[RMDB]
RNA sequence: GGGAACGACUCGAGUAGAGUCGAAAACGGGUCACGAACCGGAUUAGAUACCCGGGUAGUCCGAGCUGUAAACGAUGUCUGCUAGGUGUGGCACAGGCUACGAGCCUGUGCUGUGCCGUAGGGAAGCGCAAUAAUGACAGUUCGCUGUCAUUAUUGCAAAAGAAACAACAACAACAAC
Reactivity to DMS in 0.01 (KOAc 150mM, MgCl2 10mM, bicine 150mM(pH8.5), 24C), signal-to-noise 2, nucleotides 027 to 126: c020g010g010g000u010c050a040c060g000a200a300c010c000g000g010a050u000u000a130g000a240u010a060c090c010c000g000g000g000u010a160g000u010c090c090g010a070g000c050u000g010u000a040a060a180c070g000a090u000g000u000c010u000g000c020u000a090g010g000u000g010u000g000g000c010a010c010a000g000g000c010u010a120c300g000a190g010c010c010u000g000u000g000c000u000g010u020g010c000c000g010u000a040g000g000g000a070a100g010c150
Reactivity to 2A3 in 0.01 (KOAc 150mM, MgCl2 10mM, bicine 150mM(pH8.5), 24C), signal-to-noise 2, nucleotides 027 to 126: c000g000g010g060u060c060a030c070g000a080a000c070c000g050g000a020u040u050a070g070a100u100a120c000c020c000g000g030g020u050a030g040u050c040c030g020a050g040c060u060g060u210a110a010a120c050g020a060u160g080u140c010u070g070c040u060a030g020g030u030g000u010g020g000c010a000c000a000g000g000c010u110a090c250g040a020g000c000c000u020g000u030g000c000u000g000u000g000c000c000g000u030a020g010g010g000a030a020g050c010
The record gives the reactivity of an RNA of 177 nucleotides to DMS and 2A3. Conditions: 150 mM KOAc, 10 mM MgCl2 and 150 mM bicine (pH 8.5), 24 C. Values are in units of 0.01, from 0 to 300, in steps of 10. For 2A3 the reverse transcriptase was SuperScript II with manganese.